[RMDB]
RNA sequence: GGGAACGACUCGAGUAGAGUCGAAAACGAUAGAACGCUCGAUAAGAUGAGGGAUAAAGAACGCGAUCUCCAGUCCACUUACGAUCUAACUGGCGCAAUGCAUAGGAUUGUAUUGACUGUUACGGAUCUUCAUGAUGCAGCUGAAUUAUUUGGGCUGAUCGUACCGGCCAUUCGUGGCCGGUACGAUAAAAGAAACAACAACAACAAC
Reactivity to 2A3 in 0.01 (KOAc 150mM, MgCl2 10mM, bicine 150mM(pH8.5), 24C), signal-to-noise 2, nucleotides 027 to 156: c040g020a010u040a120g050a040a060c060g000c050u000c070g040a070u010a230a000g000a010u040g010a090g000g000g050a000u020a060a230a020g100a030a010c000g030c010g060a050u010c080u000c030c000a040g020u050c000c000a090c060u020u020a020c020g030a020u000c030u030a100a090c110u210g050g020c040g070c120a090a070u180g000c000a020u060a090g050g030a060u010u070g000u010a000u010u120g010a010c040u020g040u050u070a070c170g020g010a030u000c000u000u100c060a070u090g160a030u070g080c000a000g000c020u090g110a120a120u190u010a200u080u100u060g090g000g000c080u100g050